[RMDB]
RNA sequence: GGGAACGACUCGAGUAGAGUCGAAAAACGCGACUUACGAGUCGCGAAACAGCGGCGCGUGGCAAAGAUACUGCGAUGCGCCGCGUUACAUCGUAUCACAGUUCUUUGUCACCCUUUGCUUUACGAAACAGUAGUUUCGUUUCGACGAAACUACUGUAAAAGAAACAACAACAACAAC
Reactivity to DMS in 0.01 (KOAc 150mM, MgCl2 10mM, bicine 150mM(pH8.5), 24C), signal-to-noise 5, nucleotides 027 to 126: a110c030g030c010g000a030c010u010u010a120c170g020a060g030u000c000g010c010g000a020a030a080c160a110g030c020g000g000c070g020c150g010u000g000g000c000a020a060a090g020a150u030a100c100u010g000c000g000a010u000g000c000g000c080c030g000c050g010u000u010a060c110a080u000c040g000u010a040u000c060a040c060a030g000u000u000c030u000u000u000g000u000c050a060c020c020c020u000u000u010g000c080u000u000u000a080c100g000a130a080
Reactivity to 2A3 in 0.01 (KOAc 150mM, MgCl2 10mM, bicine 150mM(pH8.5), 24C), signal-to-noise 9, nucleotides 027 to 126: a000c010g000c000g000a000c000u030u040a040c210g100a010g000u000c000g000c000g020a020a010a010c050a010g000c000g010g000c000g010c010g030u050g050g000c020a060a090a030g130a090u180a160c070u040g010c060g090a000u010g000c000g000c000c000g000c000g000u000u010a020c020a050u030c020g030u040a020u090c030a030c010a120g040u090u020c010u060u090u050g040u040c030a080c020c000c000u060u080u100g050c060u080u110u090a080c070g060a140a110